[RMDB]
RNA sequence: GGGAACGACUCGAGUAGAGUCGAAAAGGCGACAAGUUCGCUUGUCGCCACGGGGUCCAGCCUCGAAAGGCUGGAGGUAUUGGAAUGGUCGGGCCGCCAUUCAACGCGGGACAUUCGUGUCCCGCAAGCUUGAUGAAUGGUUCGCCAUUCAUCAAGCAAAAGAAACAACAACAACAAC
Reactivity to DMS in 0.01 (KOAc 150mM, MgCl2 10mM, bicine 150mM(pH8.5), 24C), signal-to-noise 2, nucleotides 027 to 126: g020g020c000g020a000c000a010a040g000u000u000c220g000c000u010u010g020u000c010g010c000c000a010c160g020g000g000g030u000c000c010a030g010c010c000u000c300g020a130a090a160g000g000c020u000g010g000a010g000g000u000a130u010u010g010g000a010a000u000g000g000u000c000g010g020g000c000c000g000c000c040a030u000u000c010a100a100c160g000c000g010g010g010a030c000a030u000u010c160g030u000g000u000c000c010c000g020c000a010a010
Reactivity to 2A3 in 0.01 (KOAc 150mM, MgCl2 10mM, bicine 150mM(pH8.5), 24C), signal-to-noise 2, nucleotides 027 to 126: g000g000c000g010a000c010a000a010g000u030u050c170g060c100u010u000g000u020c000g000c000c000a000c020g030g000g000g020u000c000c000a000g030c020c000u080c140g180a300a170a010g000g000c000u000g000g020a000g020g000u150a190u120u300g110g000a000a010u000g000g000u010c020g020g030g000c000c000g020c000c000a000u010u000c010a030a020c090g000c000g010g000g000a000c010a020u040u080c190g090u040g000u020c000c000c000g000c000a000a000
Overview
This 177-nucleotide RNA was probed chemically with DMS and 2A3. For 2A3, 3,284 sequencing reads were counted. Conditions: 150 mM KOAc, 10 mM MgCl2 and 150 mM bicine (pH 8.5), 24 C. The DMS profile rests on 1,817 reads. The data come from the RNA Mapping Database (RMDB), library M2PK50. 2A3 adducts were read by reverse transcription with SuperScript II with manganese.